[RMDB]
This 177-nucleotide RNA was probed chemically with 2A3 and DMS. The reactions ran in a buffer of 150 mM KOAc, 10 mM MgCl2 and 150 mM bicine (pH 8.5), at 24 C. Values cover nucleotides 27 to 126. Source: RMDB library M2PK50, as collected in RNAgym. For 2A3 the reverse transcriptase was SuperScript II with manganese. The DMS profile rests on 2,996 reads.

RNA sequence: GGGAACGACUCGAGUAGAGUCGAAAAGACUACCAGUUCGCUGGUAGUCAAAGGGAAACGGGAACGCGGCGGCGUCCGCCGUAACAAACGCAAAAAGAAAAAAAAGACGAAGCUUCGGCUUCGUCAAGAUAUUACCUUCGUUCGCGAAGGUAAUAUCAAAAGAAACAACAACAACAAC
Reactivity to 2A3 in 0.01 (KOAc 150mM, MgCl2 10mM, bicine 150mM(pH8.5), 24C), signal-to-noise 3, nucleotides 027 to 126: g000a000c000u000a010c010c000a000g000u030u050c170g060c080u000g000g000u000a000g000u000c000a000a060a000g040g010g030a060a110a030c050g010g010g050a090a020c040g010c010g010g040c030g020g030c050g090u090c020c020g000c000c000g020u040a010a020c030a050a050a010c040g030c100a030a070a030a050a020g190a130a060a040a020a000a000a000a000g000a010c000g000a000a000g000c000u050u140c190g070g000c000u010u000c000g020u000c000a010a000
Reactivity to DMS in 0.01 (KOAc 150mM, MgCl2 10mM, bicine 150mM(pH8.5), 24C), signal-to-noise 3, nucleotides 027 to 126: g000a010c000u000a000c000c010a000g010u000u010c260g030c000u010g000g010u000a000g020u000c000a010a050a140g000g000g020a040a080a040c040g010g020g000a120a170c060g010c010g000g000c080g000g000c020g000u000c020c020g010c010c090g020u010a050a140c100a020a040a040c030g010c050a020a060a070a110a080g040a050a020a020a040a070a070a120a200g000a010c000g010a000a010g010c000u000u000c170g010g000c000u000u000c010g020u000c000a010a020